[RMDB]
RNA sequence: GGGAACGACUCGAGUAGAGUCGAAAAAAGCAUGUCUCUCUAUUGUCUCUCUAUUCAGAACUUAGUAUGGUGAUGGAUCGAUAGAGAGACAUUCGUGCAUCUGUCAUCCAUCACCAUAAAAACAAAAGUAUAUUGCUACCUUCGGGUAGCAAUAUACAAAAGAAACAACAACAACAAC
Reactivity to DMS in 0.01 (KOAc 150mM, MgCl2 10mM, bicine 150mM(pH8.5), 24C), signal-to-noise 2, nucleotides 027 to 126: a070a080g020c020a040u000g000u000c030u000c030u000c010u010a020u000u000g000u010c040u010c020u010c070u010a080u000u020c130a190g000a150a090c190u000u010a070g040u000a020u030g000g010u010g020a010u000g000g000a020u000c150g020a000u000a010g020a010g000a020g000a100c020a020u010u010c020g010u000g040c010a180u000c050u000g030u000c040a030u000c000c000a010u010c000a000c000c000a020u000a000a020a070a050a060c130a030a040a010a140